[RMDB]
RNA sequence: GGGAACGACUCGAGUAGAGUCGAAAAACACAAGCCCUAUCAACAAAAGACUUAGUGAGAGAUUUGGAAAUGAGGACAUUAACUUGGUCUUCCAAAAUGCUAUAAGCUGUGGGAUUAGUGUCAUGUGUAGCAACUUCAGAUUCGUCUGAAGUUGCUAAAAAGAAACAACAACAACAAC
Reactivity to DMS in 0.01 (KOAc 150mM, MgCl2 10mM, bicine 150mM(pH8.5), 24C), signal-to-noise 2, nucleotides 027 to 126: a070c070a040c050a100a120g010c070c020c010u000a140u010c110a110a100c040a070a120a110a100g020a070c040u000u010a000g020u010g010a080g000a060g010a180u000u010u000g000g010a020a100a110u020g020a060g010g010a070c070a050u010u020a060a090c170u000u000g010g000u000c030u020u010c040c030a040a040a030a040u000g010c010u010a070u000a050a050g010c050u000g040u010g010g000g000a050u000u000a040g000u000g010u010c060a030u010g000u010g010
Reactivity to 2A3 in 0.01 (KOAc 150mM, MgCl2 10mM, bicine 150mM(pH8.5), 24C), signal-to-noise 1, nucleotides 027 to 126: a000c040a010c020a090a000g000c050c000c000u040a110u060c030a000a180c020a050a190a050a020g110a150c030u020u090a050g000u040g070a070g020a030g050a190u030u000u050g050g060a050a100a110u260g040a060g010g080a000c010a160u100u120a060a050c210u030u030g060g050u080c000u000u040c020c000a000a030a050a090u150g000c040u020a030u000a180a050g050c010u040g000u060g090g010g000a000u040u070a080g010u000g060u070c060a110u100g070u060g060
The record gives the reactivity of an RNA of 177 nucleotides to DMS and 2A3.
The reactions ran in a buffer of 150 mM KOAc, 10 mM MgCl2 and 150 mM bicine (pH 8.5), at 24 C.
For DMS, 1,664 sequencing reads were counted.
DMS adducts were read by reverse transcription with MarathonRT.
For 2A3, 846 sequencing reads were counted.